[RMDB]
RNA sequence: GGGAACGACUCGAGUAGAGUCGAAAAGUAAUGACCCGAUAUCGCCCAAUGAUCUCAAUUACCUUCUUCCGGUCAAUCCUGGAAUCGGGCAGACUUAUAGAGUCUUUAAGCGAAUAUUGACUCGAGGCACGCACCGAAAUUUCGAUUUCGGUGCGUGAAAAGAAACAACAACAACAAC
Reactivity to 2A3 in 0.01 (KOAc 150mM, MgCl2 10mM, bicine 150mM(pH8.5), 24C), signal-to-noise 2, nucleotides 027 to 126: g080u130a010a100u180g160a210c000c000c000g020a020u030a050u100c010g000c000c020c020a050a170u170g020a080u010c070u040c100a030a230u220u110a080c030c010u060u050c000u020u050c000c040g000g010u020c080a010a070u080c040c010u080g000g030a030a020u030c020g000g000g050c010a010g010a010c020u040u040a020u120a160g010a000g080u020c000u000u030u120a090a060g140c100g140a110a060u060a070u020u000g000a000c000u010c010g000a010g020g000
Reactivity to DMS in 0.01 (KOAc 150mM, MgCl2 10mM, bicine 150mM(pH8.5), 24C), signal-to-noise 1, nucleotides 027 to 126: g000u010a040a120u020g010a140c000c010c000g020a020u000a040u060c060g000c020c060c020a070a000u010g000a060u020c090u000c110a010a210u020u000a100c010c060u000u000c020u020u020c000c050g050g000u000c010a130a100u040c130c000u100g000g000a070a040u000c090g050g000g000c110a020g000a100c040u040u060a060u000a100g000a040g000u000c000u000u040u040a040a100g000c090g000a150a100u000a020u040u000g000a020c000u000c010g000a100g030g000
Structure probing data (2A3 and DMS) for a 177-nucleotide construct.
For DMS the reverse transcriptase was MarathonRT.